[RMDB]
RNA sequence: GGGAACGACUCGAGUAGAGUCGAAAACGCAGGUGUCGGAGGGAUCGCCAGCCCUCAGGAUAGUGAGCUCCCGCAGAGGGAUAAGCUAUCUCCCUGCGAAACAUUUAUAUCCUUCGGGAUAUAAAUGCUUCUGAAUUGAGUUCGCUCAAUUCAGAAGAAAAGAAACAACAACAACAAC
Reactivity to 2A3 in 0.01 (KOAc 150mM, MgCl2 10mM, bicine 150mM(pH8.5), 24C), signal-to-noise 2, nucleotides 027 to 126: c030g000c000a010g080g010u150g120u290c160g170g020a000g020g020g000a090u270c110g050c120c000a040g050c010c000c020u000c000a000g000g040a010u010a010g060u080g050a010g120c020u010c040c060c000g000c090a140g060a040g190g000g000a020u020a010a000g000c000u000a000u020c010u000c000c000c000u000g000c000g000a000a000a000c000a000u010u000u000a010u000a000u030c010c000u030u050c200g090g000g000a000u000a000u000a010a010a000u000g000
Reactivity to DMS in 0.01 (KOAc 150mM, MgCl2 10mM, bicine 150mM(pH8.5), 24C), signal-to-noise 2, nucleotides 027 to 126: c060g010c010a020g000g020u010g020u020c140g020g010a010g020g010g000a090u020c100g030c080c080a280g000c000c000c000u000c020a170g000g000a000u000a010g020u000g000a140g020c300u000c000c000c000g000c220a150g020a230g000g000g000a000u000a030a300g010c040u000a020u000c000u010c050c000c020u010g000c010g020a130a040a150c010a000u000u000u000a000u000a000u000c000c000u000u010c210g010g000g010a000u000a000u000a000a000a000u010g010
The record gives the reactivity of an RNA of 177 nucleotides to 2A3 and DMS. For DMS the reverse transcriptase was MarathonRT. Reactivities are given for positions 27 through 126. 2A3 adducts were read by reverse transcription with SuperScript II with manganese. It was measured as part of the RMDB library RFMREP.